[RMDB]
RNA sequence: GGGAACGACUCGAGUAGAGUCGAAAAACGUGGUCAUACGUGACCACGACUUGAUGAGUACACUCUUUGCUGAUUCAAUGAGGAGAGUGGCCAGGGCUGAAGAGGAGACCUACGUACGCGUAGGUCACAAACAAUUCCGAUUCGUCGGAAUUGUUUGAAAAGAAACAACAACAACAAC
Reactivity to DMS in 0.01 (KOAc 150mM, MgCl2 10mM, bicine 150mM(pH8.5), 24C), signal-to-noise 9, nucleotides 027 to 126: a140c030g010u000g010g000u000c000a040u010a090c220g020u000g000a000c000c000a010c000g000a050c060u000u010g010a120u030g000a120g010u010a110c050a030c010u000c020u000u000u050g020c060u010g000a130u020u030c210a090a110u010g000a070g010g000a020g010a030g010u000g010g000c040c030a080g000g010g010c070u000g010a080a080g000a090g010g010a160g000a010c000c000u000a010c010g020u010a080c190g010c010g020u000a000g000g000u000c010a030
Reactivity to 2A3 in 0.01 (KOAc 150mM, MgCl2 10mM, bicine 150mM(pH8.5), 24C), signal-to-noise 9, nucleotides 027 to 126: a000c010g000u010g000g000u010c010a020u030a100c250g120u040g000a000c000c000a000c000g010a010c010u060u120g060a080u070g020a050g070u080a080c010a010c010u010c000u030u060u100g060c050u060g070a260u190u140c120a170a150u180g020a040g050g010a010g000a000g010u020g000g000c010c010a040g010g030g000c050u090g050a060a030g030a060g130g070a080g010a040c000c000u000a000c000g020u010a010c170g000c000g110u000a000g000g000u000c000a000

Record summary: The record gives the reactivity of an RNA of 177 nucleotides to DMS and 2A3. Conditions: 150 mM KOAc, 10 mM MgCl2 and 150 mM bicine (pH 8.5), 24 C. Reactivities are rounded to 0.1 and cut off at 0 and 3. Values cover nucleotides 27 to 126.